RNA sequence: GGGAACGACUCGAGUAGAGUCGAAAAUUAGACCCAUCGACUAACUCUUGAUUACUUUGCAGAACUACAAGCGAGUGGCGGAGGUGUGGAUGGACGAGUACAAGAACUACCUGUACAGCCACGGAGACCUAAUUUACCUAUUCGUAGGUAAAUUAGGAAAAGAAACAACAACAACAAC
Reactivity to 2A3 in 0.01 (KOAc 150mM, MgCl2 10mM, bicine 150mM(pH8.5), 24C), signal-to-noise 9, nucleotides 027 to 126: u140u060a040g060a050c010c000c000a020u040c030g090a030c030u120a260a040c010u030c010u100u200g080a150u200u130a060c020u050u080u300g010c040a040g040a240a110c070u130a090c130a130a030g020c020g030a020g030u020g010g010c020g000g020a030g020g020u060g010u030g080g030a040u030g010g030a020c050g030a030g020u040a040c040a100a030g030a220a060c050u070a090c060c010u010g010u050a040c020a040g040c020c020a050c040g050g030a070g020a040
Reactivity to DMS in 0.01 (KOAc 150mM, MgCl2 10mM, bicine 150mM(pH8.5), 24C), signal-to-noise 8, nucleotides 027 to 126: u030u030a080g000a170c050c010c000a100u020c040g000a070c030u010a110a080c020u000c010u000u040g010a110u010u020a040c030u000u010u050g030c020a070g010a110a120c160u040a100c160a110a090g000c030g010a040g000u000g010g010c060g000g000a060g010g000u010g030u020g000g000a060u000g000g000a060c030g010a070g000u010a010c050a050a080g010a120a120c190u020a070c050c030u000g000u000a030c040a120g000c040c050a060c040g000g000a130g000a140
Description: The record gives the reactivity of an RNA of 177 nucleotides to 2A3 and DMS. For DMS the reverse transcriptase was MarathonRT. For DMS, 22,342 sequencing reads were counted. The reactions ran in a buffer of 150 mM KOAc, 10 mM MgCl2 and 150 mM bicine (pH 8.5), at 24 C. In probing experiments dimethyl sulfate is read out at A N1 and C N3, which are open when not base-paired. Values cover nucleotides 27 to 126.